[RMDB]
RNA sequence: GGGAACGACUCGAGUAGAGUCGAAAAAUGAAUUGAUUCGUCAAUUCAUGACCGCAAGCGAGCCGAAAGCCAUUUUAUGCGUACGCUGGCGAAAGCCUAAAAAUCAUCGUGUCUUCGGACACGAUAACCUAGGCAUGGUAUUCGUACCAUGCCUAGGAAAAGAAACAACAACAACAAC
Reactivity to 2A3 in 0.01 (KOAc 150mM, MgCl2 10mM, bicine 150mM(pH8.5), 24C), signal-to-noise 4, nucleotides 027 to 126: a000u000g010a010a000u010u010g000a000u030u100c180g060u020c090a000a000u000u020c000a000u010g050a030c010c040g000c060a030a010g030c010g040a020g010c030c010g100a090a020a010g050c020c030a080u080u120u020u090a110u150g030c020g020u050a060c040g010c030u020g000g000c000g010a060a010a010g030c010c010u120a110a090a040a010a020u160c070a010u000c010g000u000g000u000c000u020u030c220g090g010a000c000a010c010g000a000u010a020a020
Reactivity to DMS in 0.01 (KOAc 150mM, MgCl2 10mM, bicine 150mM(pH8.5), 24C), signal-to-noise 4, nucleotides 027 to 126: a010u010g000a020a000u000u000g000a010u000u010c220g010u000c000a000a000u000u000c010a000u000g000a100c120c020g010c110a060a040g020c020g020a220g030c010c040g010a030a060a090g010c090c110a090u000u000u000u010a060u020g010c060g010u000a070c100g030c060u010g000g000c020g000a060a070a120g010c010c010u010a010a050a030a080a090u010c110a020u000c000g020u000g000u000c000u000u010c150g020g000a020c010a000c000g000a000u000a020a070
An RNA of 177 nucleotides, treated with 2A3 and DMS and read out base by base. Conditions: 150 mM KOAc, 10 mM MgCl2 and 150 mM bicine (pH 8.5), 24 C. Reactivities are given for positions 27 through 126. For 2A3 the reverse transcriptase was SuperScript II with manganese.